RNA sequence: GGGAACGACUCGAGUAGAGUCGAAAAAGACUUUUAUUUGAUGCAGUUGGUGGUAGAACACUAAAAAAUAGUACACUUUCCAGACUUAAAGAAAGUGGUGUUAAAGUUGGAAGCUUCUUCCCAUCAUACUCCUAUUUUAGUUCGCUAAAAUAGGAGUAAAAGAAACAACAACAACAAC
Reactivity to 2A3 in 0.01 (KOAc 150mM, MgCl2 10mM, bicine 150mM(pH8.5), 24C), signal-to-noise 8, nucleotides 027 to 126: a000g080a040c030u060u030u030u070a150u090u090u090g130a080u130g020c050a050g060u130u070g010g020u010g020g000u080a040g060a190a010c010a010c060u170a090a080a010a010a010a030u160a040g140u130a040c000a000c000u030u000u040c020c010a100g090a300c190u140u200a100a070a020g010a000a010a010g000u010g020g050u020g030u040u060a080a060a080g030u090u090g050g020a040a010g000c010u020u000c000u030u010c020c000c010a030u080c010a010u050
Reactivity to DMS in 0.01 (KOAc 150mM, MgCl2 10mM, bicine 150mM(pH8.5), 24C), signal-to-noise 5, nucleotides 027 to 126: a060g000a110c010u000u010u010u000a020u010u010u000g010a070u010g000c080a090g000u000u010g010g010u000g000g010u010a140g000a110a090c030a010c040u020a020a040a070a060a040a090u030a050g020u040a190c020a020c000u000u000u000c010c090a130g010a130c180u040u040a070a140a130g010a010a010a010g010u000g010g000u000g010u000u010a020a020a060g030u000u000g020g000a050a040g000c040u000u000c090u000u000c010c000c010a080u040c110a170u020